[RMDB]
RNA sequence: GGGAACGACUCGAGUAGAGUCGAAAAUGGACCCCAAUUCGACCUGGAUCGCAGCUGUCGAGCUGUUCCAGAAGGAGGGGGCCGAGUGGCUGACGGCCGCUGACGCGCCGCAGCUCAUGGCGCUGCGAAGACGGCAGAUAUUCGUAUCUGCCGUCUUAAAAGAAACAACAACAACAAC
Reactivity to DMS in 0.01 (KOAc 150mM, MgCl2 10mM, bicine 150mM(pH8.5), 24C), signal-to-noise 3, nucleotides 027 to 126: u010g020g000a130c020c000c010c020a100a150u010u010c010g000a190c210c000u000g000g000a070u010c280g030c030a000g000c000u010g000u010c300g010a050g040c010u000g020u000u000c000c000a030g010a090a200g010g030a150g020g010g000g000g030c010c010g010a070g020u000g000g010c010u010g030a170c140g010g000c030c030g010c010u000g000a130c140g000c040g010c050c010g030c030a020g000c010u000c060a050u010g010g010c100g000c020u010g010c070g010
Reactivity to 2A3 in 0.01 (KOAc 150mM, MgCl2 10mM, bicine 150mM(pH8.5), 24C), signal-to-noise 1, nucleotides 027 to 126: u140g020g040a070c000c030c000c000a060a300u070u050c010g020a110c010c050u050g070g030a070u120c160g020c040a000g000c000u110g150u300c120g150a040g000c000u000g000u020u000c000c010a030g060a130a030g010g030a060g000g050g000g000g050c000c010g000a020g010u070g020g000c020u000g090a140c010g070g000c110c040g000c060u030g110a090c060g000c010g000c020c000g010c000a010g000c000u000c000a050u100g000g030c010g000c060u100g030c000g040
This 177-nucleotide RNA was probed chemically with DMS and 2A3. For DMS the reverse transcriptase was MarathonRT. The 2A3 profile rests on 1,130 reads.